Description: Structure probing data (2A3) for a 177-nucleotide construct.
RNA sequence: GGGAACGACUCGAGUAGAGUCGAAAAGAGAGCGGAUGCCCUAUGGAGACUCGCCAAUACGAUUGCCUUUUUCAAUGUGUUGCGUGAAAUUUUAUUCGUGGUAACCAAUUUGAAAAUUUCAAAUGUCGUGACUACUGCGAUUCGUCGCAGUAGUCACAAAAGAAACAACAACAACAAC
Reactivity to 2A3 in 0.01 (KOAc 150mM, MgCl2 10mM, bicine 150mM(pH8.5), 24C), signal-to-noise 2, nucleotides 027 to 126: g160a000g000a030g060c000g050g000a190u150g040c010c030c000u070a070u060g160g000a000g020a030c040u030c000g060c000c000a030a000u060a020c040g020a010u040u170g040c000c000u170u110u000u110u160c180a100a020u000g020u000g000u020u020g020c000g030u130g070a120a070a090u230u210u100u120a170u020u010c100g000u000g110g000u070a100a110c000c000a060a120u040u000u090g070a060a010a030a080u140u160u000c030a050a040a070u110g190u180c020
It was measured as part of the RMDB library OK1LIB. For 2A3, 599 sequencing reads were counted.